[RMDB]
RNA sequence: GGGAACGACUCGAGUAGAGUCGAAAACGUCGUGAACUAGCGACAAUGCCGUAGAUCCAUCGUUAUCUAACCGAAACAUCGUGACUAGUCGUAGAAUAGAACCAGGAGUGGGCGCUGGCAAACAAAGACGGGGUCAAAGAUUCGUCUUUGGCCCCGUAAAAGAAACAACAACAACAAC
Reactivity to DMS in 0.01 (KOAc 150mM, MgCl2 10mM, bicine 150mM(pH8.5), 24C), signal-to-noise 6, nucleotides 027 to 126: c170g010u010c020g020u010g010a110a080c090u020a110g010c020g010a010c040a060a090u030g010c040c010g000u010a060g010a090u020c040c010a080u010c090g010u020u000a060u010c030u020a090a120c080c040g010a120a060a070c120a030u010c030g020u010g000a080c040u000a040g020u000c030g000u010a030g000a080a080u030a070g000a090a110c050c040a070g000g010a110g020u010g000g010g010c040g020c030u000g000g010c060a070a050a070c090a060a060a100g010
Reactivity to 2A3 in 0.01 (KOAc 150mM, MgCl2 10mM, bicine 150mM(pH8.5), 24C), signal-to-noise 4, nucleotides 027 to 126: c070g000u020c000g010u020g060a120a040c050u020a090g010c000g010a000c040a010a040u110g020c000c000g030u020a030g020a100u030c000c000a050u010c020g050u060u070a090u030c030u050a010a050c010c020g050a030a030a040c030a060u080c030g030u030g030a050c030u030a030g020u000c010g030u020a020g030a090a030u050a060g010a030a030c020c000a010g010g040a070g020u070g010g040g000c020g000c000u010g020g000c020a040a070a020c070a010a130a020g100
This 177-nucleotide RNA was probed chemically with DMS and 2A3. It was measured as part of the RMDB library OK1LIB. For 2A3, 3,844 sequencing reads were counted. Conditions: 150 mM KOAc, 10 mM MgCl2 and 150 mM bicine (pH 8.5), 24 C. The DMS profile rests on 12,447 reads. DMS (dimethyl sulfate) methylates the pairing face of unpaired adenines and cytosines. DMS adducts were read by reverse transcription with MarathonRT.